RNA sequence: GGGAACGACUCGAGUAGAGUCGAAAAUACUGAUGAAGACACCAUUCCAGCGGACCACUGUGAUCCAAGAGGCAUUCAGCCAUCAUGAUGUGGCCUUUACCUCCACUCCUGUCUUGUUCUACACAGAAAAUCGGGUCUAAUUCGUUAGACCCGAUUUAAAAGAAACAACAACAACAAC
Reactivity to DMS in 0.01 (KOAc 150mM, MgCl2 10mM, bicine 150mM(pH8.5), 24C), signal-to-noise 5, nucleotides 027 to 126: u030a080c060u000g010a060u010g000a120a040g010a090c050a050c080c050a110u030u020c020c030a070g030c100g010g000a070c050c040a060c050u010g010u020g000a090u010c050c080a080a080g000a050g010g010c060a090u010u020c120a120g010c020c010a040u020c060a090u020g000a100u040g000u010g010g010c020c030u000u010u020a080c070c020u020c020c040a090c020u010c010c010u000g000u000c030u010u010g010u020u000c030u010a080c070a080c120a080g000a050
Reactivity to 2A3 in 0.01 (KOAc 150mM, MgCl2 10mM, bicine 150mM(pH8.5), 24C), signal-to-noise 6, nucleotides 027 to 126: u160a020c030u040g080a100u080g040a110a040g070a040c020a000c050c010a060u070u060c020c020a010g020c040g010g010a040c010c010a040c040u050g020u080g050a040u040c040c030a060a060g050a030g120g000c030a030u080u080c040a100g010c020c000a040u060c020a050u110g090a110u120g040u030g060g000c000c000u030u040u060a050c000c000u010c010c010a020c020u010c000c000u000g010u050c010u040u030g010u000u020c010u080a070c060a010c010a070g130a050